[RMDB]
Source: RMDB library TTRDES, as collected in RNAgym. This 177-nucleotide RNA was probed chemically with 2A3 and DMS. In probing experiments dimethyl sulfate is read out at A N1 and C N3, which are open when not base-paired. Conditions: 150 mM KOAc, 10 mM MgCl2 and 150 mM bicine (pH 8.5), 24 C. For 2A3 the reverse transcriptase was SuperScript II with manganese.
RNA sequence: GGGAACGACUCGAGUAGAGUCGAAAAGAUAUGGACUCAAGUGGCUUUUGACGUCUAUCUUGUCGGAAACGACAAGUAAGGACGAUAAGCCAGUUGAGUCCUAAGUCAAAGGGUGCUUCGGCACCCACAUUAGGACGUCGUUCGCGACGUCCUAAUGAAAAGAAACAACAACAACAAC
Reactivity to 2A3 in 0.01 (KOAc 150mM, MgCl2 10mM, bicine 150mM(pH8.5), 24C), signal-to-noise 3, nucleotides 027 to 126: g020a030u090a040u130g000g010a000c000u010c020a040a160g290u010g020g050c000u070u110u190u300g300a160c030g000u000c000u010a160u020c020u010u000g030u010c000g010g010a070a080a110c000g000a000c030a000a010g030u030a160a090g040g020a000c020g020a040u010a060a000g010c000c000a000g030u010u000g010a010g000u000c000c000u000a010a000g020u000c030a100a070a020g020g000g000u000g000c000u080u130c270g110g000c000a000c000c000c000a010
Reactivity to DMS in 0.01 (KOAc 150mM, MgCl2 10mM, bicine 150mM(pH8.5), 24C), signal-to-noise 3, nucleotides 027 to 126: g010a030u000a300u000g010g010a020c000u000c000a000a000g020u000g000g010c000u000u010u000u020g030a190c050g000u000c000u000a300u010c010u000u010g020u000c000g000g000a150a110a150c000g000a010c030a000a010g000u010a100a300g000g000a030c000g000a080u000a010a030g020c000c000a010g000u000u000g000a020g000u010c000c000u000a010a040g020u000c090a100a110a180g010g000g040u000g020c000u000u010c250g050g010c000a010c000c000c040a010
The DMS profile rests on 2,647 reads.